The record gives the reactivity of an RNA of 177 nucleotides to 2A3. 2A3 adducts were read by reverse transcription with SuperScript II with manganese. It was measured as part of the RMDB library RFM100. For 2A3, 432 sequencing reads were counted. Reactivities are rounded to 0.1 and cut off at 0 and 3. The reactions ran in a buffer of 150 mM KOAc, 10 mM MgCl2 and 150 mM bicine (pH 8.5), at 24 C.

RNA sequence: GGGAACGACUCGAGUAGAGUCGAAAAGGGGCCUUGACGCUUAAUCAGCCUGCCGAGGUUGGCACAUGGGAAGUACGCCUCCAGGCUUUUUCCCUUUGCGCCUCGCUUCGAAUAUCGGCGGGGCGAUCGUAGCAAGCCCUUUCGAGGGCUUGCUACGAAAAGAAACAACAACAACAAC
Reactivity to 2A3 in 0.01 (KOAc 150mM, MgCl2 10mM, bicine 150mM(pH8.5), 24C), signal-to-noise 1, nucleotides 027 to 126: g020g000g020g000c000c000u020u030g080a090c090g000c020u070u070a110a050u300c020a050g060c000c010u010g030c020c030g040a070g300g060u300u300g030g000c070a040c080a240u080g260g030g070a110a000g040u000a050c000g000c000c000u010c000c000a000g050g000c020u070u000u000u000u000c020c000c050u090u120u010g000c000g000c010c000u000c000g000c000u060u110c020g060a110a000u110a190u140c050g010g000c000g000g000g000g000c000g000a000u030